Structure probing data (DMS and 2A3) for a 177-nucleotide construct.

RNA sequence: GGGAACGACUCGAGUAGAGUCGAAAACACUGCACGCCAGUGCGAUAAGGGGACUCCAUCUGCGAGGGCAUAUCGUCCUCGCUUUUCUGUACCGUAAGGUGGUACAGGAAUAAGGGCUGGGCAAGACAGUGGUGGAGGAAUUCGUUCCUCCACCACUAAAAGAAACAACAACAACAAC
Reactivity to DMS in 0.01 (KOAc 150mM, MgCl2 10mM, bicine 150mM(pH8.5), 24C), signal-to-noise 2, nucleotides 027 to 126: c070a080c090u000g020c000a110c170g000c170c050a070g050u000g030c080g000a120u070a070a110g020g000g000g020a160c030u020c130c070a020u010c240u040g000c000g000a000g000g010g000c030a110u090a040u040c070g000u000c020c000u000c000g000c000u010u000u000u010c020u000g000u000a000c000c000g010u040a150a110g020g050u040g000g000u000a000c000a000g000g000a000a030u010a160a090g000g000g020c020u010g030g000g040c040a070a190g000a030c130
Reactivity to 2A3 in 0.01 (KOAc 150mM, MgCl2 10mM, bicine 150mM(pH8.5), 24C), signal-to-noise 3, nucleotides 027 to 126: c030a000c030u050g010c060a120c230g070c120c050a050g030u020g020c010g050a040u030a120a100g000g040g000g000a020c030u100c030c010a140u060c070u110g000c010g010a010g000g020g000c010a090u150a070u240c130g010u000c000c000u000c000g000c000u010u000u000u010c000u010g000u000a000c000c020g100u090a060a080g170g180u210g030g000u050a010c010a000g060g020a000a000u140a040a050g020g020g000c100u100g000g020g010c000a030a030g050a020c070

Annotation:
The reactions ran in a buffer of 150 mM KOAc, 10 mM MgCl2 and 150 mM bicine (pH 8.5), at 24 C.